The data come from the RNA Mapping Database (RMDB), library OK3TST. Chemical mapping of a 207-nucleotide RNA with 2A3 and DMS. The 2A3 profile rests on 1,451 reads. The reactions ran in a buffer of 150 mM KOAc, 10 mM MgCl2 and 150 mM bicine (pH 8.5), at 24 C.
[RMDB]
RNA sequence: GGGAACGACUCGAGUAGAGUCGAAAAAGUGGACGUUUAUUGUUGCCGAGCAUUGUUUGUUUUGUCCACGCUCGGUCUUCCUUCUGGCGAAAGCCAGUUCACAGGCAGCUAGCCGAACCCAGCCCGUAGCAGCAACCUAGAGGCUAGCGCUACGAUAAGUAUAGUCAUCAUUCGUGAUGACUAUACUAAAAGAAACAACAACAACAAC
Reactivity to 2A3 in 0.01 (KOAc 150mM, MgCl2 10mM, bicine 150mM(pH8.5), 24C), signal-to-noise 3, nucleotides 027 to 156: a000g010u020g000g010a010c060g020u030u070u060a140u130u180g040u110u120g010c060c030g110a070g000c100a140u120u150g030u160u130u030g130u030u100u110u110g010u000c010c000a000c000g010c000u010c010g020g030u000c030u040u050c000c020u000u180c020u010g000g010c010g070a090a010a020g000c010c010a000g000u060u110c130a130c050a070g000g060c010a000g030c060u060a000g010c010c000g020a040a050c020c010c030a000g060c040c010c010g040u020a020g020c100a000g000c030a070a040c020c000u060a070g020a030g150g000c030u050a010g000c010g010c030u020a040c020g040a050u040a120
Reactivity to DMS in 0.01 (KOAc 150mM, MgCl2 10mM, bicine 150mM(pH8.5), 24C), signal-to-noise 2, nucleotides 027 to 156: a110g020u000g000g020a070c080g000u000u000u010a070u030u000g000u010u000g000c000c030g040a120g020c030a130u000u010g010u010u000u020g010u000u000u000u000g000u000c020c030a090c060g000c030u000c030g040g020u000c050u010u000c020c000u000u000c010u010g010g000c010g010a190a120a300g000c000c000a020g010u000u000c030a170c070a070g020g010c030a120g020c080u000a040g020c020c020g000a070a110c030c020c030a190g010c050c050c010g020u000a050g010c070a110g030c000a060a040c020c020u000a110g010a300g020g010c000u000a050g020c030g010c010u000a030c060g010a090u010a040